Conditions: 150 mM KOAc, 10 mM MgCl2 and 150 mM bicine (pH 8.5), 24 C. This 177-nucleotide RNA was probed chemically with 2A3 and DMS. Reactivities are rounded to 0.1 and cut off at 0 and 3. DMS adducts were read by reverse transcription with MarathonRT.

[RMDB]
RNA sequence: GGGAACGACUCGAGUAGAGUCGAAAAGGGCGUCAUUUCGAUGACGCCCAUACGUCUACUGCGAUUGGCGAGGACGACGCCGACGGGCGCGUUUGCCAAUCGCACCGUCCAGAUUCGUCUGGACGAAUUCCAAAUCGAAUUUCGAUUCGAUUUGGAAAAAAGAAACAACAACAACAAC
Reactivity to 2A3 in 0.01 (KOAc 150mM, MgCl2 10mM, bicine 150mM(pH8.5), 24C), signal-to-noise 3, nucleotides 027 to 126: g010g000g000c010g000u030c000a000u040u060u170c200g090a020u020g000a000c000g000c000c020c000a000u000a000c000g030u000c070u140a160c110u090g000c010g000a000u000u010g000g000c010g050a090g110g050a060c030g080a150c000g000c020c000g170a270c190g050g030g000c020g000c000g000u000u050u110g010c000c000a000a000u000c000g000c010a000c000c000g000u000c010c010a000g000a020u020u040c120g050u000c080u010g000g000a000c000g000a000a110
Reactivity to DMS in 0.01 (KOAc 150mM, MgCl2 10mM, bicine 150mM(pH8.5), 24C), signal-to-noise 3, nucleotides 027 to 126: g010g020g020c000g010u000c010a010u000u000u000c160g030a000u000g000a010c000g030c000c000c000a010u000a000c210g000u010c070u000a120c110u010g010c000g000a010u000u000g000g000c020g020a120g000g000a020c000g010a150c010g020c000c000g000a160c300g000g000g000c000g010c010g000u000u000u000g010c000c010a010a020u000c010g020c010a000c120c010g010u000c000c000a010g000a040u000u010c200g010u000c010u010g010g000a020c000g000a030a080